[RMDB]
RNA sequence: GGGAACGACUCGAGUAGAGUCGAAAACAACCACCGCCGUGCCUGACCGGCUUCCUGCCGGCGUCGGAGUGGCGGUCACCUGCUGACACCAGCACCGCACCGCUACCCAAGGGCACCUACUGCAGGAUCGAUCAACAACUUUCGAGUUGUUGAUCGAAAAAGAAACAACAACAACAAC
Reactivity to 2A3 in 0.01 (KOAc 150mM, MgCl2 10mM, bicine 150mM(pH8.5), 24C), signal-to-noise 4, nucleotides 027 to 126: c050a000a060c020c030a050c000c040g030c020c020g040u040g020c000c010u090g090a220c000c000g000g000c000u080u110c030c080u100g020c010c010g020g000c030g040u040c040g000g030a160g010u020g000g000c000g000g000u000c000a040c020c020u010g000c010u020g030a110c020a080c110c020a030g010c010a010c000c040g010c040a010c000c000g000c020u020a020c010c020c010a040a080g010g000g020c000a020c000c010u130a120c050u070g030c020a040g000g060a070
Reactivity to DMS in 0.01 (KOAc 150mM, MgCl2 10mM, bicine 150mM(pH8.5), 24C), signal-to-noise 2, nucleotides 027 to 126: c160a120a090c010c110a110c200c110g010c160c160g020u030g040c000c000u000g010a270c000c000g000g020c000u010u030c130c140u000g060c000c040g040g000c080g000u070c180g000g030a020g000u000g000g010c030g020g050u030c070a070c140c170u010g020c020u000g000a150c300a140c250c050a000g040c060a070c170c160g000c120a050c080c080g000c030u000a020c000c050c020a230a130g000g030g010c000a010c040c270u040a080c170u030g000c050a030g000g010a180